[RMDB]
RNA sequence: GGGAACGACUCGAGUAGAGUCGAAAAUAGGCUGCUAGAAUGGAUGUUAUCUAGUUGCCCCUGAGGCUGUGGAGCUCAAGAGAGAGGUCAGAGGCUGAGCCUGUGGGCUAAACAGGAAGGCGAAGCACGUAAAUCGAUAGUUCGCUAUCGAUUUACGAAAAGAAACAACAACAACAAC
Reactivity to DMS in 0.01 (KOAc 150mM, MgCl2 10mM, bicine 150mM(pH8.5), 24C), signal-to-noise 9, nucleotides 027 to 126: u010a120g010g000c010u000g000c010u000a020g000a050a110u010g020g020a140u010g010u000u010a120u010c010u000a020g010u000u000g000c020c000c040c060u010g010a100g000g000c040u000g030u000g010g010a110g010c050u000c060a060a110g000a110g000a070g010a100g000g010u000c060a050g010a090g000g010c040u000g000a160g010c020c010u000g020u000g020g000g010c080u000a030a060a100c080a060g010g010a090a080g000g010c040g010a120a080g010c130a190
Reactivity to 2A3 in 0.01 (KOAc 150mM, MgCl2 10mM, bicine 150mM(pH8.5), 24C), signal-to-noise 6, nucleotides 027 to 126: u160a020g020g000c010u010g000c010u030a020g030a100a070u120g090g220a090u140g080u260u120a120u100c010u010a010g020u020u030g010c000c000c000c020u040g040a040g080g000c030u030g030u080g100g040a020g010c010u010c060a090a020g080a010g010a000g010a010g060g040u030c020a020g030a030g150g000c030u030g010a020g050c020c000u050g020u120g020g000g040c060u100a060a060a010c030a020g040g030a040a020g020g000c030g020a040a000g030c040a010